[RMDB]
RNA sequence: GGGAACGACUCGAGUAGAGUCGAAAACAGUAACAUGAGCUAGAAGUGCCUCCAUGGUUAGAUUGCUGCAUUAAAUGAGGCCAUGUACAUGAAGCACCCAGUGCAGUCCAGAACCUAGUCCAUGCUGCACCAUACGCAUGUUCGCAUGCGUAUGGUGAAAAGAAACAACAACAACAAC
Reactivity to 2A3 in 0.01 (KOAc 150mM, MgCl2 10mM, bicine 150mM(pH8.5), 24C), signal-to-noise 3, nucleotides 027 to 126: c010a010g050u090a010a060c020a070u070g010a020g030c020u020a050g010a180a040g120u040g040c000c010u080c060c030a070u050g050g030u050u060a070g010a170u070u160g030c040u020g010c040a060u050u200a130a150a220u170g040a060g000g000c040c000a030u050g020u050a040c040a080u080g020a030a030g020c010a040c000c030c010a020g020u020g000c000a010g010u030c060c020a020g010a060a030c000c000u000a020g020u010c000c020a030u050g000c010u070g030
Reactivity to DMS in 0.01 (KOAc 150mM, MgCl2 10mM, bicine 150mM(pH8.5), 24C), signal-to-noise 3, nucleotides 027 to 126: c100a110g020u010a030a110c060a030u000g010a100g010c030u000a040g000a170a120g030u000g010c030c010u020c040c060a080u000g000g010u010u000a060g000a090u000u000g000c010u000g020c030a040u020u000a080a080a140u010g000a090g000g000c010c030a030u000g010u000a050c150a060u000g000a080a110g010c060a080c020c070c060a070g010u000g020c070a050g000u000c120c090a120g010a090a100c130c040u010a070g010u000c020c020a030u000g020c070u000g000

Conditions: 150 mM KOAc, 10 mM MgCl2 and 150 mM bicine (pH 8.5), 24 C. Structure probing data (2A3 and DMS) for a 177-nucleotide construct. For 2A3, 2,798 sequencing reads were counted. The data come from the RNA Mapping Database (RMDB), library OK2TST. Reactivities are given for positions 27 through 126.